[RMDB]
RNA sequence: GGGAACGACUCGAGUAGAGUCGAAAAACACGCCAACUUCGGUUGGCGUGUAAAAAACCUUUGUGAUGACCAAGCGAAGAACAUGAAGGACCCAUUGGGUCCCAUGGGAGCUUGACCAUCACUCUGGUAAAAAGCCGCUGUGUUCGCACAGCGGCAAGUAGAUUAGAUAGUUCGCUAUCUAAUCUACAAAAGAAACAACAACAACAAC
Reactivity to 2A3 in 0.01 (KOAc 150mM, MgCl2 10mM, bicine 150mM(pH8.5), 24C), signal-to-noise 1, nucleotides 027 to 156: a000c010a000c000g000c000c000a000a000c000u040u040c120g130g000u000u010g020g020c020g040u010g000u010a000a000a000a000a000a000c000c010u010u010u000g020u000g000a020u020g010a010c060c000a010a000g010c000g200a300a030g070a040a060c000a010u030g080a140a120g020g000a010c000c000c040a150u140u300g050g010g000u000c000c000c000a000u010g000g020g000a030g000c020u000u010g000a020c010c020a000u010c010a000c000u010c000u000g000g000u080a150a070a040a000a020g040c030c000g000c000u000g000u010g070u080u120c280g060c120a000c000a010g000c010g020g000c000a000a000